The record gives the reactivity of an RNA of 177 nucleotides to 2A3 and DMS.
The reactions ran in a buffer of 150 mM KOAc, 10 mM MgCl2 and 150 mM bicine (pH 8.5), at 24 C.
The DMS profile rests on 4,108 reads.
[RMDB]
RNA sequence: GGGAACGACUCGAGUAGAGUCGAAAAAAAUUUCAAAAGGGCCUUUACGCCAUGGCCUUAACGCCAUGAUUUCUUCUAAAAGGGUUUUUGGAUUGAGAUUAUCGUUACAAAUGAGCAUGACUUACCACACGCUAAUGAUAUUCGUAUCAUUAGCGUGAAAAGAAACAACAACAACAAC
Reactivity to 2A3 in 0.01 (KOAc 150mM, MgCl2 10mM, bicine 150mM(pH8.5), 24C), signal-to-noise 2, nucleotides 027 to 126: a010a010a000u090u090u030c060a050a040a000a040g040g000g060c010c010u080u100u130a060c090g000c020c020a020u050g000g000c000c000u050u020a050a000c050g000c030c030a000u020g020a050u070u040u030c020u050u040c050u070a040a040a030a060g300g060g000u040u020u030u030u050g050g010a040u000u120g000a030g000a000u040u040a060u290c010g000u020u030a070c080a050a120a090u100g010a020g040c010a040u140g050a120c020u010u060a020c020c020a030
Reactivity to DMS in 0.01 (KOAc 150mM, MgCl2 10mM, bicine 150mM(pH8.5), 24C), signal-to-noise 4, nucleotides 027 to 126: a060a050a060u010u000u010c040a050a050a070a100g030g000g010c030c010u000u000u000a070c170g020c090c030a040u000g010g020c010c050u000u000a030a050c090g010c130c120a010u000g000a050u000u000u000c040u000u000c050u010a030a020a010a050g010g020g010u030u000u000u000u000g000g010a040u010u000g000a040g000a030u000u000a020u010c030g010u000u000a050c250a080a050a060u000g010a100g030c060a090u000g000a090c050u000u000a110c080c070a200